RNA sequence: GGGAACGACUCGAGUAGAGUCGAAAAUUAAACCUUCCAUCCAUCCAAUAAGACUGACUCUGUCAAUAAGGAUGGAUGGAGGAUCCCAAUAAGACUGAGUCAGUCAGAAAAGCGGAAACGCAAAAAAGAAGUUAUUAGACUUCGGUCUAAUAACUUCAAAAGAAACAACAACAACAAC
Reactivity to DMS in 0.01 (KOAc 150mM, MgCl2 10mM, bicine 150mM(pH8.5), 24C), signal-to-noise 1, nucleotides 027 to 126: u010u010a090a110a210c090c000u020u000c000c000a000u000c000c000a000u040c000c000a220a150u010a100a070g000a040c040u010g020a050c000u010c040u040g000u000c040a090a100u000a040a110g000g030a000u000g000g000a000u000g000g000a000g000g000a060u010c010c000c010a130a060u030a120a080g000a060c050u010g020a020g020u010c080a000g000u010c020a070g000a070a050a170a100g010c000g000g000a060a060a180c010g020c020a000a050a060a110a100a140
Reactivity to 2A3 in 0.01 (KOAc 150mM, MgCl2 10mM, bicine 150mM(pH8.5), 24C), signal-to-noise 1, nucleotides 027 to 126: u040u030a130a080a080c030c000u170u000c000c000a000u010c000c010a010u000c000c000a100a120u180a290a040g000a010c000u010g000a030c010u020c070u150g130u180c030a110a190u150a210a020g000g000a000u000g000g010a000u000g000g000a000g000g000a000u010c000c000c000a010a020u080a020a000g010a010c010u010g000a000g060u040c020a000g010u010c020a000g190a060a150a060a020g000c000g000g020a020a050a000c000g000c000a060a090a000a000a000a000